[RMDB]
RNA sequence: GGGAACGACUCGAGUAGAGUCGAAAAUUACUAUGGCAUUACCAUGGUAUCGUGUUCAUACUGUUGUUUUAAAUGAUCCUGGAAGAUUAAUUUCUGUACAUUUAAUGCAUACAGCAUUAGUUGCCGGUGUAAGACUAUAUUUCGAUAUAGUCUUACAAAAAGAAACAACAACAACAAC
Reactivity to 2A3 in 0.01 (KOAc 150mM, MgCl2 10mM, bicine 150mM(pH8.5), 24C), signal-to-noise 5, nucleotides 027 to 126: u060u010a020c000u010a000u020g020g000c080a150u060u280a110c010c000a000u020g000g020u010a020u070c120g040u060g080u110u090c050a040u090a150c040u030g030u020u010g020u020u030u010u030a050a100a060u060g030a080u060c030c030u060g060g020a060a030g030a120u100u160a090a120u040u130u010c020u010g030u020a020c000a000u060u100u060a050a020u030g000c000a020u040a170c010a030g030c020a030u050u040a020g030u030u040g070c030c000g080g020
Reactivity to DMS in 0.01 (KOAc 150mM, MgCl2 10mM, bicine 150mM(pH8.5), 24C), signal-to-noise 9, nucleotides 027 to 126: u000u000a010c010u000a010u000g010g010c160a280u020u010a110c000c000a010u010g010g010u000a010u010c190g020u000g000u000u010c080a110u000a090c060u000g010u000u000g000u000u000u000u000a010a030a050u000g000a100u000c090c060u010g000g000a050a040g000a120u010u010a060a120u000u000u000c000u000g010u000a120c020a020u000u000u000a030a020u000g000c040a080u010a050c050a030g010c300a040u000u000a060g010u000u010g000c040c020g010g010